[RMDB]
RNA sequence: GGGAACGACUCGAGUAGAGUCGAAAACUGCUGAGAAGGUAAAGGAACCAUAUGUUCAAGUAUCAGCUUUAAAAAAUGGAAGCUAUUUAGUUCUAACUAGUAGAACAGAUUGCUCAAUACCAGCAUAUGUUCCUAGUAUUGUAACUGUGAAUGAAAACGUGAAAAUACUGUUCGCAGUAUUUUCACGAAAAGAAACAACAACAACAAC
Reactivity to DMS in 0.01 (KOAc 150mM, MgCl2 10mM, bicine 150mM(pH8.5), 24C), signal-to-noise 2, nucleotides 027 to 156: c030u010g030c020u000g010a120g020a190a150g020g020u000a090a120a130g000g010a040a040c080c130a080u010a050u000g020u000u000c080a070a110g020u010a100u010c050a070g010c040u000u000u020a020a050a100a100a100a100u000g000g010a170a100g030c090u000a030u000u000u000a080g030u000u010c050u000a110a160c070u000a080g030u000a120g000a040a070c020a090g010a060u010u000g000c010u000c050a070a040u000a080c080c030a040g030c020a050u000a070u000g010u020u000c000c000u010a080g000u020a050u010u000g060u000a020a060c070u000g040u000g000a110a070u000g010a100a070a060a140
Reactivity to 2A3 in 0.01 (KOAc 150mM, MgCl2 10mM, bicine 150mM(pH8.5), 24C), signal-to-noise 3, nucleotides 027 to 156: c020u020g000c010u020g020a000g030a090a070g150g070u260a230a110a070g130g010a040a040c070c030a060u030a100u260g050u040u030c060a090a040g000u040a060u070c020a000g000c000u040u140u070a080a080a040a020a000a000u100g070g030a100a010g030c010u010a050u050u110u050a100g020u010u010c010u010a010a110c010u040a090g140u040a080g040a010a000c000a000g050a070u030u130g000c000u020c070a060a060u070a230c040c050a000g000c010a010u010a010u030g000u000u000c000c010u020a030g000u030a150u090u090g010u030a020a040c040u030g020u060g170a100a120u080g060a030a180a010a010
Structure probing data (DMS and 2A3) for a 207-nucleotide construct.
It was measured as part of the RMDB library OK3TST.
The DMS profile rests on 2,925 reads.
The RNA was probed in 150 mM KOAc, 10 mM MgCl2 and 150 mM bicine (pH 8.5) at 24 C.